[RMDB]
RNA sequence: GGGAACGACUCGAGUAGAGUCGAAAAGGUGCUCUGGAGUAGAGGCUUCUUGCUUCGAAACACCAUCGAUCGUCCCUUCUUCUUUUACCUUCUCCUGGCUCUUCGAGUGAGACGCGACCGGUGGCAUCACCUCUCGGUUCGUCUUCCAACCUGCUUUCUCUUUAGGUUAGUUCGCUAACCUAAAGAGAAAAGAAACAACAACAACAAC
Reactivity to 2A3 in 0.01 (KOAc 150mM, MgCl2 10mM, bicine 150mM(pH8.5), 24C), signal-to-noise 3, nucleotides 027 to 156: g000g000u010g020c020u010c000u020g010g000a000g010u010a010g010a010g010g020c030u190u100c080u230u300g010c010u000u000c000g020a020a000a000c000a020c120c010a010u010c000g010a120u110c060g060u040c000c000c010u010u000c010u020u010c020u000u050u040u130a150c010c030u090u100c020u040c060c010u000g000g000c000u040c000u040u030c030g020a040g000u040g010a010g010a000c000g020c070g050a030c000c020g030g000u010g020g010c060a150u100c040a080c020c000u000c030u100c020g010g000u020u020c000g000u010c000u060u030c040c020a030a030c010c030u080g030c020u050u000u010

This 207-nucleotide RNA was probed chemically with 2A3.
Conditions: 150 mM KOAc, 10 mM MgCl2 and 150 mM bicine (pH 8.5), 24 C.
The data come from the RNA Mapping Database (RMDB), library VIROID.